[RMDB]
RNA sequence: GGGAACGACUCGAGUAGAGUCGAAAAUCGUGGACAAGGUGAGCCAGCUUUACAAUGGCAAGGUGAGUUACUGUGCCGAUGGAGAGGUGGUCAUCAACUUUGCUGAUGCGCCAUUGGAAGAAGAUCAUACGGUGUGAAUAUUCGUAUUCACACCGUAAAAAGAAACAACAACAACAAC
Reactivity to DMS in 0.01 (KOAc 150mM, MgCl2 10mM, bicine 150mM(pH8.5), 24C), signal-to-noise 7, nucleotides 027 to 126: u010c070g020u010g000g010a100c060a070a080g020g010u000g010a090g010c010c020a040g000c040u000u010u010a070c110a050a120u010g000g020c010a060a110g000g010u000g000a150g020u000u010a050c060u010g010u000g010c020c010g010a080u000g010g000a070g000a090g000g010u000g000g000u010c040a070u000c020a040a070c090u000u010u010g020c050u000g010a060u000g010c150g000c020c020a060u000u000g000g000a060a090g020a070a070g000a090u010c110a180
Reactivity to 2A3 in 0.01 (KOAc 150mM, MgCl2 10mM, bicine 150mM(pH8.5), 24C), signal-to-noise 4, nucleotides 027 to 126: u030c000g020u080g010g020a030c010a090a050g030g020u030g010a020g040c010c000a030g020c010u040u020u020a050c050a070a090u040g030g000c020a010a030g040g010u080g040a180g060u110u100a060c030u080g040u080g060c010c000g050a070u060g010g030a070g010a020g040g050u040g020g000u020c020a030u010c010a010a050c020u060u120u130g020c050u050g020a050u070g040c050g010c030c010a050u010u070g060g000a040a070g050a030a010g020a080u060c020a030
The record gives the reactivity of an RNA of 177 nucleotides to DMS and 2A3. DMS adducts were read by reverse transcription with MarathonRT. 2A3 adducts were read by reverse transcription with SuperScript II with manganese. The RNA was probed in 150 mM KOAc, 10 mM MgCl2 and 150 mM bicine (pH 8.5) at 24 C. As a SHAPE reagent, 2A3 marks flexible, mostly unpaired nucleotides at the ribose 2'-OH. Values are in units of 0.01, from 0 to 300, in steps of 10. The DMS profile rests on 11,163 reads. For 2A3, 6,399 sequencing reads were counted.